[RMDB]
RNA sequence: GGGAACGACUCGAGUAGAGUCGAAAAGAUAUGGAAGGAUAACUACCCACCUCGGAUUCGGAAACGAAUUUCGAGAGGUAGUUCCUUCCUAAGUCAAAACCGUAGGUUCGUUCGCGAACCUACGGAACGUUGCCUAAAAGUUCGCUUUUAGGCAACGAAAAGAAACAACAACAACAAC
Reactivity to 2A3 in 0.01 (KOAc 150mM, MgCl2 10mM, bicine 150mM(pH8.5), 24C), signal-to-noise 3, nucleotides 027 to 126: g020a020u060a040u130g000g020a000a010g000g010a020u050a300a010c000u000a000c000c040c030a200c070c020u000c010g000g000a010u010u010c000g010g030a050a110a090c010g010a030a000u060u270u300c010g000a000g020a010g000g010u000a010g000u010u000c000c000u000u000c000c000u000a030a010g030u010c020a000a000a090a180c000c010g000u000a000g000g010u000u010c000g010u040u060c300g000c000g170a010a000c000c000u000a000c000g010g000a000a000
Reactivity to DMS in 0.01 (KOAc 150mM, MgCl2 10mM, bicine 150mM(pH8.5), 24C), signal-to-noise 2, nucleotides 027 to 126: g000a040u010a300u010g000g000a020a010g010g010a080u020a080a020c010u000a000c000c000c030a120c200c000u000c010g000g000a000u000u010c000g000g000a130a070a180c000g000a010a000u000u000u010c000g010a010g020a050g000g000u000a000g010u000u000c000c000u000u000c000c000u000a000a060g010u000c020a100a100a080a120c000c040g000u010a000g000g000u000u000c000g020u000u020c250g020c010g000a010a000c000c000u000a000c000g000g000a020a010